Structure probing data (DMS and 2A3) for a 177-nucleotide construct. 2A3 is a SHAPE reagent: it acylates the 2'-hydroxyl of flexible nucleotides of all four kinds. 2A3 adducts were read by reverse transcription with SuperScript II with manganese.

[RMDB]
RNA sequence: GGGAACGACUCGAGUAGAGUCGAAAAGAUAUGGAAGAGCGGGAGCUGGUGGGAGCACAUCGGAAACGAUAGCUCCCACCCAGCGACGAUCGCUCUUCCUAAGUCAAAACCAACCUUCGGGUUGGAAGAUAAACAUCAGGUUCGCCUGAUGUUUAUCAAAAGAAACAACAACAACAAC
Reactivity to DMS in 0.01 (KOAc 150mM, MgCl2 10mM, bicine 150mM(pH8.5), 24C), signal-to-noise 5, nucleotides 027 to 126: g000a040u000a300u010g000g010a020a010g000a020g000c000g000g010g000a040g010c010u010g010g010u000g000g010g020a010g020c000a070c200a070u000c000g010g000a120a050a170c000g010a030u000a100g000c000u000c000c000c000a000c090c020c010a000g010c000g000a080c220g000a030u010c000g000c010u000c000u000u000c000c000u000a010a070g010u000c030a120a100a120a190c000c000a000a000c000c000u000u010c210g010g000g010u000u000g000g000a040a030
Reactivity to 2A3 in 0.01 (KOAc 150mM, MgCl2 10mM, bicine 150mM(pH8.5), 24C), signal-to-noise 3, nucleotides 027 to 126: g020a020u050a030u090g000g000a000a010g000a000g010c010g000g000g000a020g010c000u010g000g000u000g000g090g010a000g010c030a050c030a300u010c010g050g010a110a050a020c020g010a000u010a030g010c000u010c010c000c010a000c010c010c000a000g000c000g080a080c020g010a000u010c000g010c000u000c000u010u000c000c000u010a010a000g010u000c010a000a020a070a180c010c000a000a000c000c000u060u090c300g150g000g000u010u010g000g010a010a010
Conditions: 150 mM KOAc, 10 mM MgCl2 and 150 mM bicine (pH 8.5), 24 C.